An RNA of 177 nucleotides, treated with DMS and 2A3 and read out base by base. For 2A3 the reverse transcriptase was SuperScript II with manganese. The DMS profile rests on 627 reads.

[RMDB]
RNA sequence: GGGAACGACUCGAGUAGAGUCGAAAAGCCAUCGGGGCAAGUGCAUCGACGAUGUGAACAGUUUCAAGUGCCUCUGUGAUCCCGGCUACACGGGCUACAUAUGCCAGAAGCAGAUCAACGAAUGCGACCGAAUUGACAGUUUCGACUGUCAAUUCGGAAAAGAAACAACAACAACAAC
Reactivity to DMS in 0.01 (KOAc 150mM, MgCl2 10mM, bicine 150mM(pH8.5), 24C), signal-to-noise 1, nucleotides 027 to 126: g020c140c010a020u000c120g000g000g000g000c100a190a100g000u000g000c000a040u000c040g010a240c180g000a040u010g000u000g030a110a220c110a110g000u000u010u000c060a140a180g030u010g000c010c000u000c040u010g000u000g000a190u020c000c000c040g000g000c090u000a040c150a180c120g010g000g010c000u000a140c010a040u000a100u000g010c020c000a140g060a030a050g010c000a120g000a050u000c100a070a200c070g010a110a150u000g010c060g000a110
Reactivity to 2A3 in 0.01 (KOAc 150mM, MgCl2 10mM, bicine 150mM(pH8.5), 24C), signal-to-noise 1, nucleotides 027 to 126: g050c000c010a040u170c110g020g020g060g020c020a040a050g090u010g030c010a020u000c040g180a090c080g020a050u060g030u020g120a090a050c050a110g010u000u050u130c020a000a080g010u030g230c010c010u040c000u010g010u020g010a020u020c000c010c000g060g000c050u080a040c090a040c070g010g030g000c010u100a100c090a040u070a050u210g030c030c000a000g000a030a000g000c010a000g010a110u030c030a010a070c040g000a200a070u050g010c020g080a080